[RMDB]
RNA sequence: GGGAACGACUCGAGUAGAGUCGAAAAGAUAUGGACGAUAUCCCACAAUUCUCGCCGUCGGAAACGACGGACCCGAGUUAUGUGGGAGUAUCGUCCUAAGUCAAACUGCGGCGUUCGCGCCGCAGAAGAUGGAGAAUAAGUUCGCUUAUUCUCCAUCAAAAGAAACAACAACAACAAC
Reactivity to DMS in 0.01 (KOAc 150mM, MgCl2 10mM, bicine 150mM(pH8.5), 24C), signal-to-noise 8, nucleotides 027 to 126: g000a060u000a300u010g010g010a010c000g020a020u000a050u010c000c000c000a010c010a050a300u000u000c010u000c000g000c000c010g000u000c000g000g000a150a140a200c010g010a020c000g000g000a030c220c200c090g000a010g010u010u000a130u000g030u000g000g010g000a030g010u000a010u000c000g010u000c000c000u000a000a080g010u000c040a110a150a300c000u000g000c000g000g010c000g020u000u010c230g020c000g020c000c000g000c010a000g000a040a060
Reactivity to 2A3 in 0.01 (KOAc 150mM, MgCl2 10mM, bicine 150mM(pH8.5), 24C), signal-to-noise 7, nucleotides 027 to 126: g030a020u080a040u150g000g000a000c000g000a000u010a010u030c000c070c000a010c030a050a300u250u020c000u000c000g050c010c000g010u010c000g030g010a100a100a080c010g000a000c020g000g000a020c040c070c030g010a010g020u230u080a300u270g000u020g010g010g020a020g040u020a000u000c000g000u000c000c000u000a010a000g010u010c030a040a060a090c010u000g000c000g010g010c010g040u070u120c280g010c000g000c110c000g000c000a000g000a000a000
Structure probing data (DMS and 2A3) for a 177-nucleotide construct. As a SHAPE reagent, 2A3 marks flexible, mostly unpaired nucleotides at the ribose 2'-OH. Conditions: 150 mM KOAc, 10 mM MgCl2 and 150 mM bicine (pH 8.5), 24 C. 2A3 adducts were read by reverse transcription with SuperScript II with manganese. Source: RMDB library TTRDES, as collected in RNAgym.